[RMDB]
RNA sequence: GGGAACGACUCGAGUAGAGUCGAAAAGCACGACUUGAUUCGUCAAGUCGUGCAAAAACCGUAGGAAAGCACCUUGGACCCGUCCGCUUCGAAAGAGGCGAACGGCUAGGCACUUUCCUAAACGGAAAAAAUGGCUUGUCGUUCGCGACAAGCCAAAGAUAAUUAGGGUCUUCGGACCCUAAUUAUCAAAAGAAACAACAACAACAAC
Reactivity to 2A3 in 0.01 (KOAc 150mM, MgCl2 10mM, bicine 150mM(pH8.5), 24C), signal-to-noise 1, nucleotides 027 to 156: g000c000a000c010g010a020c050u010u040g010a000u040u040c050g030u020c140a010a000g000u000c000g040u000g000c010a000a000a030a010a000c000c000g020u010a020g000g010a040a000a020g000c020a120c010c020u100u120g180g050a170c080c010c000g000u000c000c000g020c000u020u010c000g160a210a140a130g000a000g000g000c000g000a010a000c000g000g000c010u000a000g020g000c010a040c070u000u000u020c000c000u000a030a070a000c010g010g110a030a010a000a020a000a190u060g000g000c020u020u010g000u000c030g080u090u070c250g010c000g170a000c010a000a040g050c000c000a000a000a000